[RMDB]
Chemical mapping of a 207-nucleotide RNA with 2A3.
It was measured as part of the RMDB library M2RFPK.
The reactions ran in a buffer of 150 mM KOAc, 10 mM MgCl2 and 150 mM bicine (pH 8.5), at 24 C.
RNA sequence: GGGAACGACUCGAGUAGAGUCGAAAACUUAUUAGUAACUAAUCCAAAGCAAGUAUAGGAGAACAGGUUUUUAACUAUUUUUAGGCAGAUAAAAAAUAGUAUUUGAGAGUCUAACACUAACUGAACACCACGCUCUCUUACUUCGGUAAGAGAGCAAGGUCCGUAUAAAGUUCGCUUUAUACGGACCAAAAGAAACAACAACAACAAC
Reactivity to 2A3 in 0.01 (KOAc 150mM, MgCl2 10mM, bicine 150mM(pH8.5), 24C), signal-to-noise 1, nucleotides 027 to 156: c030u130u060a050u080u110a240g070u050a060a070c050u000a050a040u120c050c030a130a070a010g020c010a090a030g060u080a080u120a110g060g000a040g000a040a040c070a070g070g000u120u010u050u000u050a050a000c000u000a040u000u060u000u000u000a050g020g060c000a000g080a220u170a040a100a010a000a030a000u000a010g010u030a110u110u110u160g130a100g000a000g010u030c010u090a110a040c070a040c070u090a220a030c040u080g080a050a010c000a050c020c000a050c080g000c000u000c000u020c000u030u000a000c010u000u040c050g020g040u000a010a000g010a000g040a000g020c000a000a000